The record gives the reactivity of an RNA of 177 nucleotides to 2A3. The RNA was probed in 150 mM KOAc, 10 mM MgCl2 and 150 mM bicine (pH 8.5) at 24 C.

RNA sequence: GGGAACGACUCGAGUAGAGUCGAAAACUGCUCACUGCUUGCCCACAAGGUCCAAGACUGCCCUCCUGGGUCUUGGUGCCAGCAGCCAUUUCUACCACAAACAUAAUCGUGAAACUAGAUUGACCAACAGUGCCGCACUGUUCGCAGUGCGGCACUGAAAAGAAACAACAACAACAAC
Reactivity to 2A3 in 0.01 (KOAc 150mM, MgCl2 10mM, bicine 150mM(pH8.5), 24C), signal-to-noise 2, nucleotides 027 to 126: c000u010g000c040u010c020a020c010u000g000c000u020u070g000c000c060c000a170c020a080a070g000g000u030c010c010a010a080g000a090c090u150g030c010c000c050u110c000c030u030g020g000g020u020c000u010u020g000g060u050g010c010c000a000g000c000a000g000c090c000a100u070u110u060c000u090a040c020c070a020c030a000a080a000c020a080u230a130a070u150c050g110u060g190a070a050a000c050u150a070g030a070u000u080g000a060c020c010a020a050
Annotation:
High 2A3 reactivity points to a flexible backbone, as in loops and unpaired stretches.